[RMDB]
RNA sequence: GGGAACGACUCGAGUAGAGUCGAAAAGAUAUGGAGGGACCUGUGGGAGCUGGUGGGUCGGAAACGACCCAUGCAGCAUCGAUCACAGGGUCCCUCCUAAGUCAAACUUUAACGUUCGCGUUAAAGACAGUUAAUUUCAGUUCGCUGAAAUUAACUGAAAAGAAACAACAACAACAAC
Reactivity to 2A3 in 0.01 (KOAc 150mM, MgCl2 10mM, bicine 150mM(pH8.5), 24C), signal-to-noise 3, nucleotides 027 to 126: g010a010u090a050u130g000g000a000g000g010g010a000c020c000u010g020u030g020g040g050a180g030c010u000g030g020u010g020g020g030u000c010g000g030a130a060a020c000g000a010c000c050c010a020u120g190c010a010g000c030a070u280c040g040a080u060c020a000c000a030g070g000g000u010c000c000c010u000c000c000u000a010a010g000u000c010a000a010a060c000u000u030u000a020a000c000g050u020u110c300g000c020g120u000u020a010a000a030g050a150
Reactivity to DMS in 0.01 (KOAc 150mM, MgCl2 10mM, bicine 150mM(pH8.5), 24C), signal-to-noise 5, nucleotides 027 to 126: g000a050u010a300u010g000g000a020g020g010g000a250c000c000u000g000u000g000g010g020a040g030c000u000g010g040u000g000g010g020u000c000g000g000a060a080a200c000g010a010c010c000c000a000u000g010c020a010g000c000a220u000c190g000a070u020c000a020c000a030g000g010g010u000c010c010c000u000c000c000u010a010a070g000u000c020a120a120a250c010u000u000u000a000a000c000g010u010u020c290g020c010g020u000u000a000a010a000g010a300